[RMDB]
RNA sequence: GGGAACGACUCGAGUAGAGUCGAAAAGGAUCAGUUGGUUAAGGAGACCACGCCGCUGGGACAGAUCUUUGGCGGCUAUCUGCGCAGCGAGGUGCGCUGUCUGAGCUGCAACCAUGUGUCCAUUACAGCCUAAUGGGCUAUUCGUAGCCCAUUAGGCAAAAGAAACAACAACAACAAC
Reactivity to 2A3 in 0.01 (KOAc 150mM, MgCl2 10mM, bicine 150mM(pH8.5), 24C), signal-to-noise 2, nucleotides 027 to 126: g000g020a010u030c060a040g130u110u090g010g000u050u080a100a050g100g020a030g070a050c040c040a030c090g020c000c010g000c020u020g000g000g040a020c030a110g150a240u080c000u040u140u130g050g000c000g000g000c020u010a040u040c060u000g060c060g000c000a000g000c010g100a040g020g110u080g070c130g050c110u010g040u020c020u040g060a020g000c010u010g020c020a010a010c000c000a020u130g090u090g030u060c010c010a010u140u040a050c050a010
Reactivity to DMS in 0.01 (KOAc 150mM, MgCl2 10mM, bicine 150mM(pH8.5), 24C), signal-to-noise 2, nucleotides 027 to 126: g010g000a060u000c060a060g030u020u000g010g000u000u010a120a180g000g010a190g010a090c120c100a030c190g000c020c020g010c030u000g020g020g020a110c110a110g010a080u000c010u000u000u010g010g000c040g040g010c040u000a030u000c020u010g000c170g000c000a020g000c060g030a250g010g010u000g030c090g010c040u000g020u000c030u000g010a100g010c010u030g000c050a140a190c010c020a050u000g000u010g010u000c020c010a110u000u020a060c210a120